[RMDB]
RNA sequence: GGGAACGACUCGAGUAGAGUCGAAAACAGACGAUGAGACGAGUACGUGCACGCAGCAAAGAUCGCGACUGUUGCUUCUGUUCGGGAGUAUAUUCAAUGGACUCUGGCUCCGAAGAGGAUUCAUUGCCUCCUCUACAGGGUUCGCCCUGUAGAGGAGAAAAGAAACAACAACAACAAC
Reactivity to 2A3 in 0.01 (KOAc 150mM, MgCl2 10mM, bicine 150mM(pH8.5), 24C), signal-to-noise 2, nucleotides 027 to 126: c010a000g090a010c010g120a150u180g020a030g020a080c040g020a030g030u140a140c040g010u060g020c040a040c040g060c040a050g060c020a050a090a050g070a050u060c050g010c030g110a050c020u020g100u080u050g000c000u070u030c010u020g080u090u040c040g020g030g000a020g070u080a060u040a050u230u150c090a030a060u100g050g020a040c010u020c020u010g040g000c060u010c070c020g020a040a020g070a010g020g060a050u000u060c000a000u060u100g050c020
Reactivity to DMS in 0.01 (KOAc 150mM, MgCl2 10mM, bicine 150mM(pH8.5), 24C), signal-to-noise 2, nucleotides 027 to 126: c080a040g000a140c040g020a080u010g010a100g010a120c120g020a120g020u010a070c160g010u010g030c030a040c120g040c120a060g010c060a050a100a110g000a030u000c020g020c070g010a080c050u010g020u010u000g000c030u000u000c030u000g010u020u000c140g010g010g000a090g020u000a070u000a070u010u000c060a030a110u000g000g000a050c030u000c000u010g010g000c040u000c060c050g010a080a050g000a050g000g010a090u000u000c060a020u000u000g020c300
This 177-nucleotide RNA was probed chemically with 2A3 and DMS.
For 2A3 the reverse transcriptase was SuperScript II with manganese.
The RNA was probed in 150 mM KOAc, 10 mM MgCl2 and 150 mM bicine (pH 8.5) at 24 C.
The data come from the RNA Mapping Database (RMDB), library OK2TST.
The DMS profile rests on 1,763 reads.